Chemical mapping of a 177-nucleotide RNA with 2A3. Conditions: 150 mM KOAc, 10 mM MgCl2 and 150 mM bicine (pH 8.5), 24 C.
RNA sequence: GGGAACGACUCGAGUAGAGUCGAAAAGCUCACGAUUCUCAAAGGUAAAUAUCAGCUGGUAAUUCUGGGAGCUAAGCAAGAUAUGAAACACUCGGAAUUUCAGUUGGUAUCGACUUUUUUGAAUUGAACAACGCGCUUAUUUCGAUAAGCGCGUUGUAAAAGAAACAACAACAACAAC
Reactivity to 2A3 in 0.01 (KOAc 150mM, MgCl2 10mM, bicine 150mM(pH8.5), 24C), signal-to-noise 2, nucleotides 027 to 126: g060c010u020c000a020c010g010a010u000u010c020u000c000a000a000a000g040g010u050a050a070a000u000a000u010c000a020g000c000u030g110g100u160a000a000u000u000c000u000g000g000g040a020g030c040u280a100a010g070c060a040a030g080a300u230a060u300g110a180a120a000c040a020c000u020c010g000g000a010a010u000u010u010c000a000g000u000u000g000g000u000a000u000c010g040a000c000u020u000u000u000u000u030g040a010a010u000u020g010a010